[RMDB]
RNA sequence: GGGAACGACUCGAGUAGAGUCGAAAAGAUAUGGAGUUACAAGCGCAUACUGUAGUCGGAAACGACCGUAUGAACUACGCUGGGUAACUCCUAAGUCAAAACUUGGCCGGGUUCGCCCGGCCAAGAAGUACGAAAGUACGUUCGCGUACUUUCGUACAAAAGAAACAACAACAACAAC
Reactivity to DMS in 0.01 (KOAc 150mM, MgCl2 10mM, bicine 150mM(pH8.5), 24C), signal-to-noise 2, nucleotides 027 to 126: g020a020u010a300u000g000g010a050g000u000u000a030c000a200a040g020c020g000c000a050u000a020c040u000g030u000a120g050u000c000g050g000a110a140a140c030g010a000c000c110g020u000a020u010g020a060a050c140u020a220c000g000c000u030g000g000g000u000a000a000c000u000c000c030u000a010a050g000u000c020a090a090a100a200c000u000u000g010g030c010c040g030g000g030u000u000c240g020c020c000c000g000g000c020c000a000a010g010a030a100